[RMDB]
RNA sequence: GGGAACGACUCGAGUAGAGUCGAAAAAGUGUAUGAAGUACGUAGAGUGUCGGCAAGCUCUAUAUAUGGACACUUACGAAGAGUUUUGGUUGUUUUGUAUCUCAAGCCGACUUUGAGUAUUUGAGGAAAAAGACUUACGCCUUCGGGCGUAAGUCAAUCGUUUACUCUACUUCGGUAGAGUAAACGAAAAAGAAACAACAACAACAAC
Reactivity to 2A3 in 0.01 (KOAc 150mM, MgCl2 10mM, bicine 150mM(pH8.5), 24C), signal-to-noise 2, nucleotides 027 to 156: a010g120u090g000u090a210u130g040a040a010g010u010a030c020g000u020a010g010a000g050u020g010u030c020g040g030c090a190a110g010c000u000c020u030a020u020a020u010a010u050g050g010a000c010a000c010u060u040a030c080g070a070a060g030a030g030u000u030u090u140g100g000u010u000g020u000u000u000u080g030u020a090u060c020u010c030a000a010g000c000c000g000a030c040u070u090u090g070a060g040u080a090u050u120u120g040a060g000g110a040a130a020a000a000g000a000c000u010u000a000c000g000c030c020u040u090c230g040g010g000c000g010u000a000a000g000u000c000a000a000

Chemical mapping of a 207-nucleotide RNA with 2A3. The RNA was probed in 150 mM KOAc, 10 mM MgCl2 and 150 mM bicine (pH 8.5) at 24 C. It was measured as part of the RMDB library M2RFPK.